[RMDB]
RNA sequence: GGGAACGACUCGAGUAGAGUCGAAAAGUGAUUGGACAGAACUGUUGAAUCACGACUGAAUUUCACAGUUCUGCAAGAACGGGAAAUGGCCCCAAGAGUCGUAGGGACAGAACCUUAUGGCCAUAGCACAUCGAAGCAAAUUCGUUUGCUUCGAUGUAAAAGAAACAACAACAACAAC
Reactivity to DMS in 0.01 (KOAc 150mM, MgCl2 10mM, bicine 150mM(pH8.5), 24C), signal-to-noise 6, nucleotides 027 to 126: g010u000g000a160u010u010g000g050a140c030a010g000a000a020c010u000g030u030u040g010a020a020u000c070a070c300g030a160c230u020g000a080a080u020u030u010c070a020c000a010g000u000u000c000u010g020c020a050a040g010a180a030c020g020g000g040a070a100a050u030g000g000c050c000c010c100a120a090g010a100g050u010c020g020u000a010g000g000g040a140c190a160g030a140a200c020c010u000u000a020u010g010g000c010c010a080u010a050g010c220
Reactivity to 2A3 in 0.01 (KOAc 150mM, MgCl2 10mM, bicine 150mM(pH8.5), 24C), signal-to-noise 8, nucleotides 027 to 126: g050u060g020a060u030u020g070g070a080c000a000g020a010a010c010u030g070u210u130g060a020a020u050c040a040c170g150a040c140u120g060a060a130u050u060u050c020a000c000a010g000u000u000c000u000g000c000a000a010g030a030a000c050g010g010g050a030a110a130u110g100g030c010c000c000c020a080a060g050a030g070u010c010g020u010a020g030g010g030a060c090a180g180a160a120c010c000u010u010a030u030g010g000c000c010a030u080a040g070c060